[RMDB]
Description: Conditions: 150 mM KOAc, 10 mM MgCl2 and 150 mM bicine (pH 8.5), 24 C. Structure probing data (2A3) for a 207-nucleotide construct. For 2A3 the reverse transcriptase was SuperScript II with manganese.
RNA sequence: GGGAACGACUCGAGUAGAGUCGAAAAGCGCACAAUGGCUUCGGCCAUUGUGCGCAAAAGAAAGUGGGUGCGCGUUUGGCGCAUCAACUCGGGUGGAACCGCGGGAGCUACGCUCUCGUCCCGAGAAAAGGUACGAACUGUUUCGACAGUUCGUACCCCAUGAAAUGCUCUUCGGAGCAUUUCAUGGAAAAGAAACAACAACAACAAC
Reactivity to 2A3 in 0.01 (KOAc 150mM, MgCl2 10mM, bicine 150mM(pH8.5), 24C), signal-to-noise 1, nucleotides 027 to 156: g010c000g080c020a040c000a000a010u070g000g090c000u150u140c300g080g050c020c020a000u000u010g010u000g020c030g000c000a010a000a000a010g030a030a030a010g160u050g020g020g000u010g000c000g020c060g070u200u220u300g100g000c010g000c000a000u000c000a000a000c010u000c000g040g000g000u140g050g060a130a090c080c000g000c060g000g000g000a020g010c100u270a030c220g000c050u010c000u000c000g000u000c000c000c000g000a010g020a000a080a010a000g000g000u000a000c000g000a010a000c010u000g060u060u070u110c140g050a020c000a000g000u000u010c000g000u020a000c000c000